[RMDB]
This 177-nucleotide RNA was probed chemically with DMS. Reactivities are given for positions 27 through 126. In probing experiments dimethyl sulfate is read out at A N1 and C N3, which are open when not base-paired. DMS adducts were read by reverse transcription with MarathonRT.

RNA sequence: GGGAACGACUCGAGUAGAGUCGAAAAAGAUAUGGAACCUCAGAAGCUGAUGACCCAUGGAGAUAGCUGUAUAUCGGAAACGAUAUACCGAAACCAUGGCAAGGCUUCUAAGAGGUUCCUAAGUCAAGCACACUAUCAUGUUCGCAUGAUAGUGUGCAAAAGAAACAACAACAACAAC
Reactivity to DMS in 0.01 (KOAc 150mM, MgCl2 10mM, bicine 150mM(pH8.5), 24C), signal-to-noise 1, nucleotides 027 to 126: a090g010a020u010a020u020g000g000a040a000c020c000u000c020a060g020a010a020g010c010u020g000a070u020g000a060c300c000c000a030u000g010g020a110g010a200u000a120g000c040u000g000u020a000u000a000u000c000g000g010a010a000a030c020g000a030u000a020u000a010c000c050g000a130a170a300c000c000a010u010g000g030c020a150a050g010g010c000u010u010c020u020a150a070g020a000g020g000u000u000c000c000u000a000a050g000u000c030a080a190